[RMDB]
The record gives the reactivity of an RNA of 177 nucleotides to 2A3. Conditions: 150 mM KOAc, 10 mM MgCl2 and 150 mM bicine (pH 8.5), 24 C. Reactivities are given for positions 27 through 126.
RNA sequence: GGGAACGACUCGAGUAGAGUCGAAAAUUGCUUGACAGUCUUUUCUACCUGAUUUUUCAAUUCAACCUCGUUGAUUUCCUCAGCCAUUCCUUGAGAAAUCAGAGGGAAUGGAUGGCCGAUCAAACAACAGUUGUUCCGUCUUCGGACGGAACAACUGAAAAGAAACAACAACAACAAC
Reactivity to 2A3 in 0.01 (KOAc 150mM, MgCl2 10mM, bicine 150mM(pH8.5), 24C), signal-to-noise 2, nucleotides 027 to 126: u020u050g100c050u010u100g000a110c020a050g090u110c020u100u110u010u000c070u120a150c000c020u070g150a210u070u040u000u010u280c020a090a080u020u000c000a000a110c000c010u030c100g100u000u030g050a130u010u040u000c000c000u090c040a000g020c030c030a050u000u080c000c030u010u030g090a040g060a070a060a030u020c020a040g100a100g220g000g000a000a000u020g000g100a000u000g040g150c090c050g040a070u040c060a020a120a080c070a020a010